[RMDB]
RNA sequence: GGGAACGACUCGAGUAGAGUCGAAAAAUAGAGAUUGGGGUCAUACAACCCCAGAAACCAUUCCUUAUACCUUGAGUAUUGCUGAAUUCAGUUUAGCGUGCAUGCUCUUGGCUAUUCUCAUAGUGAUAAAAUCUGUAGUCCUUCGGGACUACAGAAAGUGUUAUAACGCGUUCGCGCGUUAUAACACAAAAGAAACAACAACAACAAC
Reactivity to 2A3 in 0.01 (KOAc 150mM, MgCl2 10mM, bicine 150mM(pH8.5), 24C), signal-to-noise 1, nucleotides 027 to 156: a000u140a010g010a000g000a000u080u060g060g000g000g000u010c010a010u010a270c070a050a000c110c050c050c000a010g020a040a000a030c020c000a030u040u040c000c040u080u060a030u050a130c000c000u020u000g000a000g010u030a100u110u110g000c000u060g040a170a240u300u300c050a180g080u040u040u130a090g150c010g000u020g030c010a000u000g010c010u000c000u010u000g020g000c010u030a030u090u050c010u040c030a100u070a080g080u170g070a070u100a180a060a060a110u000c000u000g000u000a000g010u010c000c000u060u060c150g130g000g040a000c010u000a000c000a000g000a000a000a000

Notes: The record gives the reactivity of an RNA of 207 nucleotides to 2A3. It was measured as part of the RMDB library M2RFPK.